[RMDB]
Background:
This 177-nucleotide RNA was probed chemically with DMS and 2A3. It was measured as part of the RMDB library OK2TST. Conditions: 150 mM KOAc, 10 mM MgCl2 and 150 mM bicine (pH 8.5), 24 C. Values are in units of 0.01, from 0 to 300, in steps of 10.

RNA sequence: GGGAACGACUCGAGUAGAGUCGAAAAGGCAAGCCGCUGCUCGAUGAAUCAUGGGAUGGCGGUUACGGGGUCAUCCAGUCAAAAGUGAAGGCCGGCUCGCCGAAUUGGGACGUGGUUCAGGUCGAGAACCCAGUAGUGAUUUCGAUCACUACUGGGUAAAAGAAACAACAACAACAAC
Reactivity to DMS in 0.01 (KOAc 150mM, MgCl2 10mM, bicine 150mM(pH8.5), 24C), signal-to-noise 4, nucleotides 027 to 126: g000g040c010a060a030g020c000c010g010c130u010g010c010u000c030g030a200u010g010a080a090u000c120a130u020g010g000g010a030u000g000g000c010g040g000u000u000a070c210g010g000g000g020u010c010a010u000c010c010a110g000u000c140a050a070a090a120g020u010g010a160a130g010g030c090c040g030g020c020u000c050g030c010c000g000a070a060u010u000g010g000g010a110c050g010u000g010g010u000u000c050a060g010g010u000c040g020a160g010a120
Reactivity to 2A3 in 0.01 (KOAc 150mM, MgCl2 10mM, bicine 150mM(pH8.5), 24C), signal-to-noise 2, nucleotides 027 to 126: g000g000c010a010a040g000c000c020g010c120u080g030c020u020c020g070a100u100g080a070a130u130c080a100u150g080g010g030a010u020g010g010c040g010g040u020u040a030c080g010g030g060g000u000c010a000u000c030c000a020g160u100c040a040a040a040a060g070u090g080a120a060g080g070c060c020g000g040c000u010c020g000c000c010g000a000a040u080u030g040g000g000a030c070g030u070g000g020u040u080c030a020g020g060u050c020g000a000g040a090